An RNA of 207 nucleotides, treated with 2A3 and DMS and read out base by base. The reactions ran in a buffer of 150 mM KOAc, 10 mM MgCl2 and 150 mM bicine (pH 8.5), at 24 C. For DMS, 3,068 sequencing reads were counted.
[RMDB]
RNA sequence: GGGAACGACUCGAGUAGAGUCGAAAAGUUUGAAAUGCAGCCACAUUGUUGAGUGGAUGCAUGGGCUGUCCUGUUGGCGGUGGUGGUGGUGAGUGGAAUUCCAUUGUAUGACUAUAGCUCAGUCUGUGAUUCCAUUUUCCUGUGGAUGGACCCACAAAUUAUCCACGAGUUUCGACUCGUGGAUAAUAAAAGAAACAACAACAACAAC
Reactivity to 2A3 in 0.01 (KOAc 150mM, MgCl2 10mM, bicine 150mM(pH8.5), 24C), signal-to-noise 1, nucleotides 027 to 156: g030u100u120u140g130a080a130a040u010g070c000a000g020c040c000a020c010a030u060u120g060u060u110g060a040g000u020g000g000a020u010g000c000a010u000g000g040g030c020u020g010u050c000c070u020g010u040u080g030g010c050g000g000u070g020g040u030g010g010u010g060g000u020g000a000g030u020g030g030a050a090u120u030c050c000a060u060u100g070u120a160u140g050a050c010u060a010u150a130g050c010u000c110a000g070u000c020u020g070u040g020a080u060u020c000c000a000u000u000u080u040c000c010u040g040u100g010g060a100u150g080g050a040c020c000c020a050c020a020a120
Reactivity to DMS in 0.01 (KOAc 150mM, MgCl2 10mM, bicine 150mM(pH8.5), 24C), signal-to-noise 1, nucleotides 027 to 156: g000u000u000u000g010a090a100a040u010g020c010a050g000c000c020a030c010a180u000u000g020u000u000g050a210g040u000g000g020a020u000g060c010a000u000g000g020g010c060u010g030u000c000c040u000g020u000u000g020g010c080g040g030u010g030g040u000g000g040u000g010g060u000g020a070g060u000g030g000a050a130u000u000c150c070a110u010u020g040u020a090u010g020a090c010u000a160u000a130g000c120u020c050a070g010u000c040u030g000u010g010a130u000u020c020c010a060u000u000u010u000c090c020u020g010u010g010g020a100u000g010g000a170c020c000c000a020c000a040a140
It was measured as part of the RMDB library OK3TST.